An RNA of 177 nucleotides, treated with 2A3 and DMS and read out base by base.
[RMDB]
RNA sequence: GGGAACGACUCGAGUAGAGUCGAAAAGUCAGUCAACUAGCAGAAAGAAGAAAAGCUAGUGACUGACAGGCAGGCGAAAGCUCCAAACCUGCCGUAUCCGAUAAGGAUACAAAAGUAAAAGGAGCAAAUUCCACCUGGAUUUCGAUCCAGGUGGAAUAAAAGAAACAACAACAACAAC
Reactivity to 2A3 in 0.01 (KOAc 150mM, MgCl2 10mM, bicine 150mM(pH8.5), 24C), signal-to-noise 3, nucleotides 027 to 126: g000u010c000a000g010u000c010a110a060c160u060a010g030c030a010g190a170a240a060g280a160a000g070a010a140a030a000g000c000u000a000g000u010g000a000c000u000g000a010c010a010g000g000c000a000g010g000c020g130a120a020a050g000c000u000c000c000a000a000a010c000c000u000g010c000c000g000u000a000u000c000c010g040a100u100a300a060g000g000a000u010a000c010a020a050a020a040g130u180a010a050a030a040g000g000a000g000c000a010a010
Reactivity to DMS in 0.01 (KOAc 150mM, MgCl2 10mM, bicine 150mM(pH8.5), 24C), signal-to-noise 2, nucleotides 027 to 126: g000u000c000a030g000u000c010a010a110c000u010a010g000c000a170g010a090a210a160g010a090a140g040a160a050a170a210g010c000u010a000g010u000g000a000c000u000g000a000c000a040g000g000c000a000g000g000c180g000a030a080a090g010c000u000c010c010a050a140a150c000c010u010g000c020c000g050u000a000u000c000c000g030a120u130a060a130g000g000a010u000a000c020a050a070a030a070g000u020a120a050a130a060g010g000a000g000c000a030a100
Conditions: 150 mM KOAc, 10 mM MgCl2 and 150 mM bicine (pH 8.5), 24 C.
It was measured as part of the RMDB library OK1LIB.
Reactivities are given for positions 27 through 126.